[RMDB]
RNA sequence: GGGAACGACUCGAGUAGAGUCGAAAACGAUCUUCUUCAAAAUAUCUAGCGCGACUGAGCGCUUGAACUCCGGCGCCGGCUGGGUGCUUCCAUACUCCCGCAUGAUGAGCUCAUAUUCGCGAUGUUCAUGACACUGAAUAUUCGUAUUCAGUGUCAUAAAAGAAACAACAACAACAAC
Reactivity to DMS in 0.01 (KOAc 150mM, MgCl2 10mM, bicine 150mM(pH8.5), 24C), signal-to-noise 8, nucleotides 027 to 126: c100g010a070u000c060u000u000c030u000u010c060a080a110a130a120u010a090u000c060u000a060g010c010g010c020g010a120c280u010g000a130g020c020g000c030u000u000g010a080a130c100u010c040c030g020g000c060g010c070c080g010g010c050u010g000g010g020u000g010c040u000u000c050c030a060u000a100c070u000c020c010c020g010c130a070u000g000a080u000g000a080g000c020u000c030a060u010a110u010u000c060g020c080g010a110u010g010u000u000c080
Reactivity to 2A3 in 0.01 (KOAc 150mM, MgCl2 10mM, bicine 150mM(pH8.5), 24C), signal-to-noise 6, nucleotides 027 to 126: c020g030a030u040c020u130u000c010u150u090c090a080a070a060a130u170a100u050c040u040a000g030c000g000c020g120a140c140u160g070a050g040c020g000c000u010u010g000a010a020c010u010c030c020g080g000c050g020c050c040g090g000c020u050g020g020g040u030g010c000u050u000c020c010a030u040a090c010u000c010c010c000g020c020a020u090g030a060u060g020a040g010c010u030c070a070u070a110u130u070c030g010c030g090a070u090g040u070u070c030